[RMDB]
RNA sequence: GGGAACGACUCGAGUAGAGUCGAAAAGUAUUGUUCACCGGCUGUGUUGGGUUAGACGACAGGUAGGCAAAACCUGUCACGAAAAUAAUCAGUGAAGCAGCGAUUGCUCCCAGCGCUACACUCCAUGAACCCCCAUAUUGUUCGCAAUAUGGGGGUUAAAAGAAACAACAACAACAAC
Reactivity to DMS in 0.01 (KOAc 150mM, MgCl2 10mM, bicine 150mM(pH8.5), 24C), signal-to-noise 2, nucleotides 027 to 126: g010u010a070u000u010g010u000u010c050a070c030c030g030g020c040u010g020u000g000u010u010g010g000g010u010u000a060g010a120c140g000a010c000a000g010g000u010a080g000g000c260a050a070a100a020c020c000u000g020u000c010a060c130g020a070a080a080a050u010a050a060u000c050a070g030u000g000a050a110g030c050a030g020c070g020a100u000u000g030c070u000c020c000c010a140g010c060g020c030u000a050c090a050c090u000c050c060a090u010g000
Structure probing data (DMS) for a 177-nucleotide construct. The DMS profile rests on 1,585 reads. It was measured as part of the RMDB library OK2TRN. DMS adducts were read by reverse transcription with MarathonRT.